Background:
An RNA of 207 nucleotides, treated with 2A3 and read out base by base. 2A3 adducts were read by reverse transcription with SuperScript II with manganese. Source: RMDB library OK3TST, as collected in RNAgym.
[RMDB]
RNA sequence: GGGAACGACUCGAGUAGAGUCGAAAAAGAGUGGCCGAAAUUGUGGACGAAGAUGUUUUUAAACUAAUCACUAAUCCUAGUGCAUUUAAUCAAUUGGAUUGGAAAAAGCGUAGGGAACUAUUAUUCCAAAUUGCAGAUGACAUUACAGAUGACGAUGACGAAUCUUCACAUUCGUGUGAAGAUUCGUAAAAGAAACAACAACAACAAC
Reactivity to 2A3 in 0.01 (KOAc 150mM, MgCl2 10mM, bicine 150mM(pH8.5), 24C), signal-to-noise 1, nucleotides 027 to 156: a000g070a010g000u040g030g000c060c020g090a030a130a050u180u170g000u050g080g000a040c090g020a060a010g030a100u040g010u000u000u010u060u130a200a220a070c050u080a070a060u090c010a000c080u010a040a000u010c030c020u040a010g040u030g020c010a050u260u010u130a220a120u100c040a030a030u050u030g050g000a050u040u090g030g040a100a020a000a050a000g050c040g050u060a030g000g040g020a030a000c000u110a090u300u000a050u140u030c000c010a000a000a160u080u050g000c000a000g020a040u000g020a090c020a030u000u140a000c000a050g030a050u010g000a000c050g000a020u020g000